[RMDB]
RNA sequence: GGGAACGACUCGAGUAGAGUCGAAAACUUGCCAAUAUGGUGAAUCACCAUCUCUACUAAAUAUACAGAAAUUAGCUGGGCAUGGUGGUGCGCGCCUACUCCCAGCUAUCGGGAGGCUGAGGCGGGAGAAUCACUCGAAUCAGGGAGGUGGAGGUUACGUAGUACUCCACUUCGGUGGAGUACUACGAAAAGAAACAACAACAACAAC
Reactivity to 2A3 in 0.01 (KOAc 150mM, MgCl2 10mM, bicine 150mM(pH8.5), 24C), signal-to-noise 1, nucleotides 027 to 156: c010u040u070g050c020c010a040a060u180a080u170g050g050u070g060a110a080u100c040a020c050c010a060u000c030u000c010u110a190c040u090a140a120a150u180a050u190a160c070a040g120a040a140a060u090u030a020g010c020u040g020g000g000c050a040u070g050g000u030g000g020u050g000c110g000c000g020c010c000u000a030c000u030c010c000c000a010g040c010u020a030u120c000g020g010g000a010g040g040c040u040g010a010g020g010c000g020g020g000a020g040a010a060u070c010a040c110u120c030g060a010a030u090c000a010g000g000g020a000g000g060u020g010g040a040g040g000u120u000a020

Chemical mapping of a 207-nucleotide RNA with 2A3. The data come from the RNA Mapping Database (RMDB), library OK3TST. For 2A3 the reverse transcriptase was SuperScript II with manganese.